[RMDB]
This 207-nucleotide RNA was probed chemically with 2A3 and DMS. The data come from the RNA Mapping Database (RMDB), library RNAMAK. The RNA was probed in 150 mM KOAc, 10 mM MgCl2 and 150 mM bicine (pH 8.5) at 24 C. 2A3 adducts were read by reverse transcription with SuperScript II with manganese. Reactivities are given for positions 27 through 156.
RNA sequence: GGGAACGACUCGAGUAGAGUCGAAAAUGACUGUUCGCAGUCAAAAAAAUCCUAAGUCGAUCCGUUUGACGAGUCAGCAAGCCUACCAUCGGAAACGAUGGAGGUGAUGACCUGACUCCGAGGAUCGAUAUGGAAAAAAGCAUGGUUCGCCAUGCAACAGCAUUAGUCACUUCGGUGACUAAUGCUGAAAAGAAACAACAACAACAAC
Reactivity to 2A3 in 0.01 (KOAc 150mM, MgCl2 10mM, bicine 150mM(pH8.5), 24C), signal-to-noise 2, nucleotides 027 to 156: u020g000a000c010u010g000u100u180c250g010c170a060g000u000c000a070a120a030a010a080a010a050u080c050c020u100a150a040g020u010c000g000a000u000c000c010g060u160u090u250g100a130c010g000a010g000u010c000a000g000c020a080a190g010c010c030u300a300c160c030a000u010c010g010g080a130a060a040c020g000a000u000g000g000a000g000g000u010g010a080u110g000a010c060c000u000g000a000c000u000c000c000g030a080g000g000a000u000c000g000a000u000a020u030g000g030a000a020a000a040a060a000g050c000a000u010g000g060u060u130c250g120c020c010a000u020g000c010a000a010
Reactivity to DMS in 0.01 (KOAc 150mM, MgCl2 10mM, bicine 150mM(pH8.5), 24C), signal-to-noise 1, nucleotides 027 to 156: u000g010a120c010u000g000u010u000c140g090c070a010g040u010c000a000a010a020a100a040a120a070u000c000c000u010a060a180g000u000c000g000a050u000c000c000g030u000u000u010g030a120c060g010a030g010u000c010a010g040c010a070a300g000c010c010u000a120c000c000a030u000c000g030g010a260a170a280c000g020a010u000g020g010a000g040g050u000g000a100u010g030a060c300c040u030g040a100c000u000c010c010g000a270g040g040a000u000c000g040a000u000a120u000g000g020a030a000a090a120a040a130g000c000a000u000g000g010u000u000c300g000c040c010a010u000g040c000a120a160